[RMDB]
RNA sequence: GGGAACGACUCGAGUAGAGUCGAAAACUAGACGGGUAAAGACAUCUUCGAUACUCUGAAGGCGUGUCUCCAUCAAAGCCCACUGCUCAAGAGCCGCCUUACCAGUUGGCUUCUGGAAAGAAGGGUUGGAUUUAAGGAGGAGGAAUCCGUCCUGAAGGGUAUAAGUGACAUUCGUGUCACUUAUACCAAAAGAAACAACAACAACAAC
Reactivity to 2A3 in 0.01 (KOAc 150mM, MgCl2 10mM, bicine 150mM(pH8.5), 24C), signal-to-noise 3, nucleotides 027 to 156: c030u020a050g030a040c040g030g010g010u150a110a110a000g030a020c010a040u030c040u030u040c010g090a090u120a260c100u080c110u230g020a020a010g050g010c060g000u040g040u000c010u000c030c010a120u150c060a080a120a050g000c010c020c030a030c050u100g020c010u040c090a080a050g020a010g000c020c010g000c000c010u010u040a070c050c020a020g030u040u050g110g000c000u080u050c010u030g050g080a130a050a060g090a060a050g010g020g000u110u160g020g040a070u050u080u170a110a070g040g000a010g010g020a030g050g000a070a010u030c000c010g050u040c040c000u040g040a090a060g140
Reactivity to DMS in 0.01 (KOAc 150mM, MgCl2 10mM, bicine 150mM(pH8.5), 24C), signal-to-noise 2, nucleotides 027 to 156: c030u000a070g060a080c020g000g040g000u000a120a040a090g000a060c040a050u000c040u000u000c020g030a230u010a140c110u010c070u000g010a050a040g030g020c100g050u010g010u000c000u000c000c030a080u000c080a070a070a170g000c010c000c040a170c050u010g030c040u010c040a130a060g030a110g000c050c030g020c040c010u000u030a170c120c080a180g020u000u000g030g000c010u010u000c000u000g020g000a120a050a150g040a180a100g010g000g010u000u010g000g000a120u000u000u000a150a080g020g010a230g030g010a150g000g000a090a080u000c030c020g010u000c000c140u010g050a100a220g010